[RMDB]
RNA sequence: GGGAACGACUCGAGUAGAGUCGAAAAGAUGGCAUAUGAUUGGAAGUUUGUUAACCAUGCUGUUAAGUGUGGUAAGUGUGAUAAUCAUGUAGUUGAAGCUGGAGCCUUUGAGAGUGUGAUUACAUCUUGUUGUCGUGAUGAAAUUGUACAUCAGGGACGGAUACAGGGAUUUCGAUCCCUGUAUCCGAAAAGAAACAACAACAACAAC
Reactivity to 2A3 in 0.01 (KOAc 150mM, MgCl2 10mM, bicine 150mM(pH8.5), 24C), signal-to-noise 2, nucleotides 027 to 156: g050a000u110g000g010c060a080u060a070u300g060a120u010u090g000g030a030a080g020u030u060u090g060u120u080a000a030c030c020a000u030g060c000u020g070u300u220a160a020g000u010g020u020g030g020u020a060a060g060u060g020u030g090a030u050a080a070u090c020a020u060g030u070a060g030u030u060g020a000a000g000c000u050g030g020a020g040c000c000u030u040u030g060a050g000a040g000u030g000u010g010a020u080u110a070c030a050u020c000u080u020g000u000u000g050u060c110g040u060g000a030u050g020a000a030a180u080u070g020u060a020c030a040u040c020a020g050g070g020a050